[RMDB]
RNA sequence: GGGAACGACUCGAGUAGAGUCGAAAACAUCAUGAUAAGCUUGGCUCAAUUCCAACACUUUAUUUUAUGAGUUUGCAUAAAUUAUUUAGGUUACUCCUCAAUGAAGUAGAUUAAUAACAGGACAUACUUUCUAGAGGCAUCAGGAAGAGCAAAUGAACAUUUACCUGGAUUUCGAUCCAGGUAAAUGAAAAGAAACAACAACAACAAC
Reactivity to 2A3 in 0.01 (KOAc 150mM, MgCl2 10mM, bicine 150mM(pH8.5), 24C), signal-to-noise 5, nucleotides 027 to 156: c020a060u110c030a050u090g060a090u080a160a040g080c070u070u140g080g000c010u020c060a060a270u080u020c020c010a090a030c040a070c050u100u130u090a070u050u110u040u030a030u040g030a060g190u070u300u140g060c000a010u030a060a050a040u150u150a060u060u120u080a030g010g000u010u030a050c030u060c020c000u010c020a030a050u180g020a000a010g000u030a030g040a050u100u140a120a100u110a160a060c060a060g060g050a030c010a040u060a030c000u080u140u050c010u010a010g000a010g020g010c010a020u080c050a000g030g010a030a030g010a000g040c010a020a060a090u080g030a060a020
Reactivity to DMS in 0.01 (KOAc 150mM, MgCl2 10mM, bicine 150mM(pH8.5), 24C), signal-to-noise 2, nucleotides 027 to 156: c060a160u010c020a070u000g020a130u010a050a100g010c050u010u000g020g040c090u000c060a150a240u000u000c010c010a070a120c120a050c020u000u000u000a060u020u010u020u010a050u000g000a060g000u000u010u000g010c010a050u000a030a080a090u010u000a020u010u000u000a060g010g000u000u000a020c060u000c010c010u000c110a050a140u000g010a030a020g010u020a040g010a120u000u000a050a030u010a090a120c070a140g010g020a050c040a070u000a040c020u000u000u000c090u010a180g000a080g000g010c060a090u000c090a130g020g020a020a040g010a080g030c010a040a060a080u000g000a060a140